An RNA of 177 nucleotides, treated with 2A3 and DMS and read out base by base. The reactions ran in a buffer of 150 mM KOAc, 10 mM MgCl2 and 150 mM bicine (pH 8.5), at 24 C. For 2A3, 3,010 sequencing reads were counted. For 2A3 the reverse transcriptase was SuperScript II with manganese.

[RMDB]
RNA sequence: GGGAACGACUCGAGUAGAGUCGAAAACAUGCGUAUCUUGGAAACUCGUCACUACUAGAUUCAGAUCAUCAUUCUAUCCUGAAGUGUGGUGGGUACUUACUGGGGUUUGCGGAUCCAAAGUCCAAAAGAAUUUCCCAACAUUCGUGUUGGGAAAUUCAAAAGAAACAACAACAACAAC
Reactivity to 2A3 in 0.01 (KOAc 150mM, MgCl2 10mM, bicine 150mM(pH8.5), 24C), signal-to-noise 5, nucleotides 027 to 126: c030a010u140g020c040g040u110a090u050c010u060u060g050g030a050a090a040c060u020c050g090u020c040a010c070u160a030c020u040a140g060a210u060u020c010a030g050a150u050c040a080u020c010a040u160u140c060u110a100u100c010c060u060g050a030a010g040u030g010u020g090g050u030g030g010g000u040a080c030u070u080a080c040u050g050g020g010g020u050u050u110g030c030g020g000a000u000c010c040a040a060a010g050u000c000c000a010a050a030a070
Reactivity to DMS in 0.01 (KOAc 150mM, MgCl2 10mM, bicine 150mM(pH8.5), 24C), signal-to-noise 2, nucleotides 027 to 126: c100a120u000g010c020g010u010a050u010c020u000u040g010g000a070a020a020c010u000c090g050u000c090a040c080u020a030c030u030a070g000a090u040u000c000a060g000a070u070c220a040u000c150a030u050u020c140u000a150u050c070c080u000g040a070a040g060u000g000u060g030g030u000g000g020g000u000a040c250u000u020a050c140u000g000g010g000g000u000u000u000g000c240g010g010a040u010c040c110a020a060a080g040u040c020c070a030a060a100a170